[RMDB]
RNA sequence: GGGAACGACUCGAGUAGAGUCGAAAAGAUCUGCGCCGAUCCGAAACGCUAGCUAACAGCCCGCAUCAUGUCGUCUCCUAACUUCGACGUGGUGAAAUACUGAGCUUAUGCGAGUAAGCCUGUUAGCAAUAGAUCAGAACGUUCGCGUUCUGAUCAACAAUGUUCUAGCGUUCGCGCUAGAACAUUGAAAAGAAACAACAACAACAAC
Reactivity to 2A3 in 0.01 (KOAc 150mM, MgCl2 10mM, bicine 150mM(pH8.5), 24C), signal-to-noise 5, nucleotides 027 to 156: g030a060u020c030u110g000c040g040c050c060g030a050u050c040c030g050a080a070a030c070g030c130u080a030g000c000u000a020a010c000a010g020c010c020c020g040c000a010u010c000a000u000g010u010c000g030u000c050u090c110c120u110a140a150c060u050u040c020g010a010c000g000u020g010g000u010g020a040a030a010u200a030c070u040g030a010g030c010u070u050a030u150g100c080g020a040g070u020a020a010g010c000c000u020g010u000u020a000g000c000a020a090u090a070g000a000u000c000a000g000a000a000c010g020u060u060c170g010c010g120u000u000c020u000g010a000u000c000a000a000
Reactivity to DMS in 0.01 (KOAc 150mM, MgCl2 10mM, bicine 150mM(pH8.5), 24C), signal-to-noise 2, nucleotides 027 to 156: g010a030u000c010u000g010c110g090c020c040g000a040u020c010c030g020a090a100a050c020g020c050u000a100g010c000u000a080a060c090a070g000c060c010c070g000c030a030u000c030a030u000g000u000c010g010u000c070u010c140c080u000a110a050c140u010u010c020g000a020c030g070u000g020g000u000g010a070a060a130u000a210c060u010g020a100g050c010u000u000a070u000g010c170g000a220g020u000a010a090g000c010c000u000g000u000u000a060g000c000a080a150u000a150g020a030u010c010a000g010a030a000c000g010u000u000c300g040c020g010u010u000c010u020g000a000u000c000a040a100
Conditions: 150 mM KOAc, 10 mM MgCl2 and 150 mM bicine (pH 8.5), 24 C. Structure probing data (2A3 and DMS) for a 207-nucleotide construct. For DMS the reverse transcriptase was MarathonRT. For DMS, 3,884 sequencing reads were counted.